The record gives the reactivity of an RNA of 177 nucleotides to 2A3. For 2A3, 552 sequencing reads were counted.
[RMDB]
RNA sequence: GGGAACGACUCGAGUAGAGUCGAAAACAUCAUCACCUAGAAAUGCGUAAUGAAUACUUUAUUUGUGGUCUCUGAUUUCUAGGAACUUAACAGUGGAAUAUAGACCGCAUUGAUGCCAAGAGAUAUCGUCUUUGCACGGGUUCGCCCGUGCAAAGACAAAAGAAACAACAACAACAAC
Reactivity to 2A3 in 0.01 (KOAc 150mM, MgCl2 10mM, bicine 150mM(pH8.5), 24C), signal-to-noise 1, nucleotides 027 to 126: c030a050u110c030a000u030c000a040c020c010u010a000g000a090a040a080u210g110c010g000u270a140a080u120g000a010a060u060a120c010u130u170u210a240u000u130u050g060u050g010g000u040c010u080c010u020g140a040u030u000u040c000u000a040g030g060a000a020c090u120u070a060a050c000a050g100u010g020g050a060a040u180a020u070a090g060a010c010c020g000c000a040u000u080g000a040u070g150c010c040a120a060g060a000g030a040u050a060u130c040